[RMDB]
This 177-nucleotide RNA was probed chemically with 2A3 and DMS.
For 2A3 the reverse transcriptase was SuperScript II with manganese.
The RNA was probed in 150 mM KOAc, 10 mM MgCl2 and 150 mM bicine (pH 8.5) at 24 C.
The data come from the RNA Mapping Database (RMDB), library OK2TRN.

RNA sequence: GGGAACGACUCGAGUAGAGUCGAAAAUUGCUAUAUUGCCUCCUGACUGUGCAAGAGAGUGUGAAGUCCUCUUCGAUGACAUAAGAAAUUCUCCAACACACAGCACAGCCUGGAAGCAUGCACUCCGAUCCCUUUCUAUGUUCGCAUAGAAAGGGAUAAAAGAAACAACAACAACAAC
Reactivity to 2A3 in 0.01 (KOAc 150mM, MgCl2 10mM, bicine 150mM(pH8.5), 24C), signal-to-noise 7, nucleotides 027 to 126: u040u040g000c020u040a040u050a100u300u190g010c000c000u000c000c000u010g020a060c000u010g010u030g000c020a110a060g080a030g010a030g200u020g000u020g060a070a030g030u030c000c020u050c060u140u080c090g090a100u120g030a040c030a080u190a070a070g090a060a110a030u180u040c060u030c040c010a050a050c010a010c000a000c010a030g000c000a000c000a000g000c000c010u020g000g000a000a000g000c000a010u020g000c020a020c040u020c010c010g020
Reactivity to DMS in 0.01 (KOAc 150mM, MgCl2 10mM, bicine 150mM(pH8.5), 24C), signal-to-noise 4, nucleotides 027 to 126: u010u000g010c020u010a110u010a080u000u000g010c000c010u000c000c000u000g000a030c010u000g010u000g010c000a150a150g010a100g030a110g030u000g020u000g010a110a110g010u000c070c110u010c050u000u010c140g010a120u000g010a120c130a080u000a090a080g000a040a070a130u000u010c020u010c040c070a080a090c050a020c060a070c070a150g000c000a010c010a010g000c010c010u000g000g010a020a010g020c010a020u000g000c030a050c220u000c010c050g000